[RMDB]
This 207-nucleotide RNA was probed chemically with 2A3.
RNA sequence: GGGAACGACUCGAGUAGAGUCGAAAACUCCACAGCUGUAAGGCUGUGGGCCCGAGAGAAGUCGCUCUCUCUCGCCCUUCACAUCCCUCUCGGCAUUGAGAUGACCAUAGGCCAGGGGUGAGUCCUUAAGUGGACACAGCUGAUCUAAGGCGGUGUGGCAUGACUAAGGCUUCGGCCUUAGUCAUGCAAAAGAAACAACAACAACAAC
Reactivity to 2A3 in 0.01 (KOAc 150mM, MgCl2 10mM, bicine 150mM(pH8.5), 24C), signal-to-noise 2, nucleotides 027 to 156: c040u020c000c000a000c000a000g000c000u080g110u300a140a080g060g020c000u000g000u000g000g010g000c050c040c000g010a010g000a000g000a080a000g080u250c110g050c080u050c010u000c000u000c020u010c040g080c010c000c000u080u090c030a000c000a030u020c000c000c000u000c010u000c030g020g000c020a010u020u160g060a110g070a140u140g080a070c000c050a170u200a090g040g030c000c000a010g000g000g000g000u020g040a020g000u020c000c020u300u130a300a290g300u200g050g000a000c000a000c000a040g000c020u080g050a150u120c020u120a030a050g010g000c030g050g000u050g010u030g040

The RNA was probed in 150 mM KOAc, 10 mM MgCl2 and 150 mM bicine (pH 8.5) at 24 C. Source: RMDB library VIROID, as collected in RNAgym.